[RMDB]
RNA sequence: GGGAACGACUCGAGUAGAGUCGAAAAGAUAUGGAUGGUAUGUCUGCUCCGAAUUCUCGAUAAGUUGGUAUCGGAAACGAUAUCAGCAACUUUUGACGAGAACGGAGCAGACAUACCAUCCUAAGUCCAUAUUAUUGGCGUUCGCGCCAAUAAUAUGAAAAGAAACAACAACAACAAC
Reactivity to DMS in 0.01 (KOAc 150mM, MgCl2 10mM, bicine 150mM(pH8.5), 24C), signal-to-noise 5, nucleotides 027 to 126: g010a110u000a300u010g000g000a010u000g010g020u000a000u000g000u000c000u000g010c000u000c000c000g010a130a250u000u000c000u000c000g030a180u010a040a120g010u000u010g000g000u000a000u000c000g020g000a140a080a220c010g010a010u000a000u000c060a060g010c090a060a070c210u000u000u010u000g010a260c070g000a030g010a030a100c010g010g000a010g010c000a000g000a000c000a000u000a000c000c000a000u000c000c010u010a000a080g010u000c040